[RMDB]
RNA sequence: GGGAACGACUCGAGUAGAGUCGAAAACGUCUGUUGAAUGAUAUCCCACCAUAUAAUUAUUGGAGGAGACAAUUGUUUGAGCUGUUGCCGCCACACUGCGCCCAGAAUCAGGUUCAUAGACUUGUCCAUUCAUCUUAAGUUUCGACUUAAGAUGAAUAAAAGAAACAACAACAACAAC
Reactivity to 2A3 in 0.01 (KOAc 150mM, MgCl2 10mM, bicine 150mM(pH8.5), 24C), signal-to-noise 8, nucleotides 027 to 126: c040g020u010c040u070g150u100u120g100a110a090u080g020a030u030a030u090c040c010c000a050c010c020a030u100a010u060a250a230u250u180a050u090u100g020g010a030g020g030a080g020a030c070a110a120u090u080g080u100u060u110g050a030g010c020u030g030u120u080g010c020c020g020c020c010a030c000a000c030u040g000c010g010c020c010c000a020g050a020a060u040c010a010g030g070u020u020c020a030u050a050g020a040c000u040u080g030u020c030c000
Reactivity to DMS in 0.01 (KOAc 150mM, MgCl2 10mM, bicine 150mM(pH8.5), 24C), signal-to-noise 9, nucleotides 027 to 126: c180g020u010c050u010g010u000u010g010a110a070u000g000a070u010a140u000c010c010c010a160c080c070a040u000a070u010a110a110u010u000a110u010u000g010g010a140g010g010a090g010a050c080a050a070u010u000g010u000u000u000g010a090g010c040u000g010u000u000g010c040c030g010c030c040a050c070a060c080u000g010c060g010c020c020c020a080g000a060a060u010c080a060g000g000u000u000c040a050u010a070g000a050c050u000u000g010u000c050c060

About this RNA: Structure probing data (2A3 and DMS) for a 177-nucleotide construct. DMS adducts were read by reverse transcription with MarathonRT. The RNA was probed in 150 mM KOAc, 10 mM MgCl2 and 150 mM bicine (pH 8.5) at 24 C. Values are in units of 0.01, from 0 to 300, in steps of 10. Source: RMDB library OK2TST, as collected in RNAgym. Values cover nucleotides 27 to 126. The DMS profile rests on 23,404 reads.